[RMDB]
An RNA of 177 nucleotides, treated with DMS and read out base by base. The data come from the RNA Mapping Database (RMDB), library OK2TRN. The reactions ran in a buffer of 150 mM KOAc, 10 mM MgCl2 and 150 mM bicine (pH 8.5), at 24 C. DMS adducts were read by reverse transcription with MarathonRT.

RNA sequence: GGGAACGACUCGAGUAGAGUCGAAAAUCGGAGAUAGGAUCCAUAAAAUUCGGGAAAGCAUGGGCUGCCUAGUAGCUUGCACUCUGAGAAGCUUUCUCAUGUAUCAAGAGUCAUUUGCGGAGAAUGAUCUUGUGGCAACUUUCGAGUUGCCACAAGAAAAAGAAACAACAACAACAAC
Reactivity to DMS in 0.01 (KOAc 150mM, MgCl2 10mM, bicine 150mM(pH8.5), 24C), signal-to-noise 1, nucleotides 027 to 126: u000c030g000g020a070g030a110u000a040g170g000a110u000c070c050a070u030a100a110a060a140u020u050c140g000g000g000a020a050a060g030c020a120u000g010g020g000c090u010g010c020c060u010a100g000u000a080g060c050u000u000g030c110a090c020u000c160u020g000a170g000a130a110g020c040u000u000u000c000u000c000a140u010g000u000a060u020c110a120a170g000a060g000u010c020a020u000u000u000g030c170g000g000a200g000a050a080u010g030a110